[RMDB]
RNA sequence: GGGAACGACUCGAGUAGAGUCGAAAAUUGUGAUCAGACAGGGCAUGUGCCUCAGGGAAGAUCAGGCACACUCGUUAUAUCUUUCCUGUGAGUGUACGAACAGUGGCAUAGAUACGCACCAAGGACAUGACGACUACCGGUUCGCCGGUAGUCGUCAAAAAGAAACAACAACAACAAC
Reactivity to DMS in 0.01 (KOAc 150mM, MgCl2 10mM, bicine 150mM(pH8.5), 24C), signal-to-noise 1, nucleotides 027 to 126: u020u020g010u000g000a090u000c010a120g000a300c040a140g010g010g030c040a110u010g010u000g030c000c040u010c010a030g000g020g000a050a080g000a010u000c260a220g000g010c080a090c240a120c130u010c080g000u000u040a100u020a070u010c030u000u000u000c000c030u030g000u000g000a000g000u010g000u000a010c150g030a060a080c150a010g000u030g000g000c050a030u010a030g000a040u000a090c100g000c140a070c090c110a000a070g000g000a060c110a040